[RMDB]
RNA sequence: GGGAACGACUCGAGUAGAGUCGAAAAGCUCCACCGCUGUCGGGGAACCGCGCCAAUUUUCGCUUCAGUGCUAGACCAUCCAAAGUGUCUAUCACCGGGUGAAAAUUCGCAUGGGUCCCCGACGCGGAGCACGCUGGCAGUUCGCUGCCAGCGUGCUAAAAGAAACAACAACAACAAC
Reactivity to 2A3 in 0.01 (KOAc 150mM, MgCl2 10mM, bicine 150mM(pH8.5), 24C), signal-to-noise 1, nucleotides 027 to 126: g010c040u080c000c030a020c000c000g010c100u180g010u000c000g030g000g000g000a020a000c000c010g020c000g020c030c010a000a000u010u000u000u000c010g020c020u300u300c060a010g000u000g000c000u000a000g000a020c010c000a040u110c010c050a170a120a060g070u190g000u150c000u000a000u000c000a000c010c000g010g000g010u020g000a000a000a000a000u030u000c000g030c000a060u120g010g010g050u020c000c000c000c030g000a000c000g010c000g010g000